Record summary: Structure probing data (2A3) for a 207-nucleotide construct. 2A3 adducts were read by reverse transcription with SuperScript II with manganese. The RNA was probed in 150 mM KOAc, 10 mM MgCl2 and 150 mM bicine (pH 8.5) at 24 C. The 2A3 profile rests on 708 reads. It was measured as part of the RMDB library OK3TST.

RNA sequence: GGGAACGACUCGAGUAGAGUCGAAAAUCGCCAUGAUCUUCUUGCGCUCCUUCUUGCGCAUAUCGUUAAGGCGCUCGACUUCGGCGACGAUAGGAUCGAUGGCUAACGAGUUAAUCGCAGACUUACCAGCCGAGGGCGGUUGCGACGUGAUGACGUACCUUACCUCUCACUUCGGUGAGAGGUAAGGAAAAGAAACAACAACAACAAC
Reactivity to 2A3 in 0.01 (KOAc 150mM, MgCl2 10mM, bicine 150mM(pH8.5), 24C), signal-to-noise 2, nucleotides 027 to 156: u090c030g000c000c000a030u060g000a040u020c060u180u000c120u110u060g040c000g010c000u100c010c050u230u140c100u110u110g000c000g050c040a060u040a060u140c060g040u030u070a100a070g090g000c000g060c010u010c030g070a060c050u030u010c030g000g040c000g020a040c000g000a070u080a110g050g030a000u030c030g040a020u080g010g000c030u000a100a000c100g030a020g070u060u140a060a010u070c000g020c040a020g050a140c030u050u060a020c040c020a060g000c030c020g030a040g010g060g000c020g010g070u040u000g000c000g020a060c040g030u010g030a150u080g000a000c000g030u000a030